Chemical mapping of a 177-nucleotide RNA with 2A3 and DMS. For DMS the reverse transcriptase was MarathonRT. As a SHAPE reagent, 2A3 marks flexible, mostly unpaired nucleotides at the ribose 2'-OH. Values are in units of 0.01, from 0 to 300, in steps of 10. The DMS profile rests on 12,150 reads. 2A3 adducts were read by reverse transcription with SuperScript II with manganese.

[RMDB]
RNA sequence: GGGAACGACUCGAGUAGAGUCGAAAAGAUAUGGACCCUGCAGGACAUGACGUCAUUUCGGAAACGAAAUCCCGUCAACAGCCUGUCAGGGUCCUAAGUCAAACUAUCGUAGUUCGCUACGAUAGAAGCUUAUGAUAAUCUUCGGAUUAUCAUAAGCAAAAGAAACAACAACAACAAC
Reactivity to 2A3 in 0.01 (KOAc 150mM, MgCl2 10mM, bicine 150mM(pH8.5), 24C), signal-to-noise 7, nucleotides 027 to 126: g010a000u020a020u060g000g000a000c000c000c000u000g000c000a000g000g020a060c140a300u300g000a000c000g000u010c010a010u000u000u010c010g000g020a020a000a020c010g020a010a010a010u060c060c050c010g010u010c030a220a160c080a300g050c000c000u020g030u130c010a000g000g000g000u000c000c000u000a010a000g000u000c000a000a000a040c010u010a000u000c000g000u010a000g030u050u060c300g020c170u010a000c000g000a000u000a000g010a020a030
Reactivity to DMS in 0.01 (KOAc 150mM, MgCl2 10mM, bicine 150mM(pH8.5), 24C), signal-to-noise 6, nucleotides 027 to 126: g000a020u000a080u000g000g000a020c000c000c000u000g020c000a010g020g000a050c160a160u010g020a020c010g040u000c150a020u000u000u000c000g010g000a020a030a060c000g000a010a010a020u000c060c040c000g040u000c000a080a080c230a150g010c000c000u000g000u020c020a000g000g000g010u000c000c000u000a000a060g000u000c010a140a140a280c010u000a000u000c000g020u000a000g010u000u020c290g030c000u000a000c000g010a010u000a000g000a070a120